[RMDB]
RNA sequence: GGGAACGACUCGAGUAGAGUCGAAAACGAGAUUGAGGCGUUUUUGGGUACAUGUUUGGGUACACCGCUACGAGCACGGUGCUUCUGACCUGCGGUUUUACGGUGGAUUGCACCGGAAUCGGCUGAUUAAAAGUUCGUCGCCUCGGCGUGUCGACCAGCUUCUGCUCAAUUUCGAUUGAGCAGAAGCAAAAGAAACAACAACAACAAC
Reactivity to 2A3 in 0.01 (KOAc 150mM, MgCl2 10mM, bicine 150mM(pH8.5), 24C), signal-to-noise 2, nucleotides 027 to 156: c040g020a030g000a050u180u190g040a050g000g020c050g000u000u050u000u150u120g070g040g000u060a070c070a150u110g150u220u170u160g280g000g010u050a050c180a100c010c000g000c070u100a040c080g000a000g020c150a000c010g000g000u020g000c000u000u010c010u040g200a090c010c000u080g060c040g120g000u040u040u070u300a070c090g010g000u030g000g060a150u040u260g050c000a000c020c000g050g000a000a010u000c010g170g010c080u130g030a080u110u170a050a070a010a010g040u080u080c010g050u050c000g000c000c000u010c000g000g000c060g020u020g050u060c110g050a100c010c000a000